[RMDB]
RNA sequence: GGGAACGACUCGAGUAGAGUCGAAAACAGUGUAAAAAGGAGCCCAGUGUGGGUUCAGGAGCCAGACUGCCUGGGUUUAAACUUUGGUCUUGUGACUUUACUGUAUUCGGGCUCUGUACCUCAUUUUUCUCAUUCUAAGAUGGGGAUAAUAAAAGUACUAUCAGUACGGGUUCGCCCGUACUGAUAGAAAAGAAACAACAACAACAAC
Reactivity to 2A3 in 0.01 (KOAc 150mM, MgCl2 10mM, bicine 150mM(pH8.5), 24C), signal-to-noise 1, nucleotides 027 to 156: c030a010g080u050g010u170a040a020a110a090a180g030g010a030g030c020c010c030a060g040u090g010u060g300g030g030u040u020c040a050g010g020a000g000c000c020a040g010a010c010u010g020c000c000u050g070g000g000u000u080u120a030a020a040c040u130u050u100g000g000u010c050u050u230g020u110g040a020c010u080u020u020a050c030u080g030u080a100u000u150c040g010g000g010c020u000c010u000g000u010a080c000c000u000c010a030u000u000u000u090u000c060u080c040a160u290u090c130u110a090a000g010a040u000g000g000g000g040a000u070a100a060u060a000a070a050a030g050u110a060